Record summary:
Structure probing data (2A3) for a 207-nucleotide construct. Reactivities are given for positions 27 through 156. The reactions ran in a buffer of 150 mM KOAc, 10 mM MgCl2 and 150 mM bicine (pH 8.5), at 24 C. For 2A3, 1,111 sequencing reads were counted.
RNA sequence: GGGAACGACUCGAGUAGAGUCGAAAACACAAUGUACGCCAUUAACAUUGUUUAUGCAAGCACGUUUCGCAAUGUACGGCGCAGAAACAUUGCCAACACAAAUACGCUUCACGAUGUGCGGCACAGAAAAAGCUCGCGCACUUCGGUGCGCGAGCAACAGUGUUACUGUCUUCGGACAGUAACACUGAAAAGAAACAACAACAACAAC
Reactivity to 2A3 in 0.01 (KOAc 150mM, MgCl2 10mM, bicine 150mM(pH8.5), 24C), signal-to-noise 2, nucleotides 027 to 156: c080a010c000a020a030u070g020u090a020c050g000c040c030a070u150u170a110a000c000a000u030u030g050u090u250u130a130u100g030c060a020a070g030c040a000c110g030u050u090u100c030g000c020a020a010u040g020u050a010c020g060g010c130g030c100a020g130a010a060a000c030a020u000u040g000c020c050a090a020c020a020c030a110a230a040u120a050c120g000c020u020u050c000a000c030g060a030u080g000u020g040c000g000g030c030a020c030a100g190a080a130a030a020a000g010c000u010c000g010c010g000c010a000c020u030u070c180g070g000u000g000c010g000c000g000a000g000c000a000a000